This 177-nucleotide RNA was probed chemically with DMS and 2A3.
Reactivities are given for positions 27 through 126.
For DMS, 35,814 sequencing reads were counted.
The RNA was probed in 150 mM KOAc, 10 mM MgCl2 and 150 mM bicine (pH 8.5) at 24 C.

RNA sequence: GGGAACGACUCGAGUAGAGUCGAAAAUGGACACGGCAAGUCGGCACAACACCGGACUCGCGGUGAGCGAUGCAGCGUAGCUAAUGCUACGCAGCUGCUGUGCGGAUGGCUAGCGAAGGCUAGCCUACACUAUAUCCAGCUUCGGCUGGAUAUAGUGAAAAGAAACAACAACAACAAC
Reactivity to DMS in 0.01 (KOAc 150mM, MgCl2 10mM, bicine 150mM(pH8.5), 24C), signal-to-noise 7, nucleotides 027 to 126: u030g010g000a130c050a030c000g000g010c180a060a080g000u010c030g010g000c060a060c090a110a140c100a030c010c010g010g010a140c160u030c090g010c010g000g010u010g000a160g010c040g000a060u020g020c030a050g020c000g010u000a000g010c000u030a090a160u040g020c000u000a000c000g010c000a010g020c010u010g010c000u010g010u000g000c010g000g000a060u010g000g010c000u000a000g000c010g010a130a080g000g000c010u000a010g000c000c000u020a070
Reactivity to 2A3 in 0.01 (KOAc 150mM, MgCl2 10mM, bicine 150mM(pH8.5), 24C), signal-to-noise 9, nucleotides 027 to 126: u130g060g010a020c000a000c010g020g000c010a060a080g030u060c030g070g060c070a020c020a170a080c010a020c010c010g150g090a230c050u060c120g150c020g050g000u080g030a040g040c040g070a080u080g010c020a010g000c000g000u000a000g000c040u210a220a050u300g000c000u000a000c000g000c000a000g000c010u020g000c010u010g000u030g010c020g050g050a100u120g010g000c000u000a000g000c020g100a150a030g110g000c000u000a000g000c000c000u000a010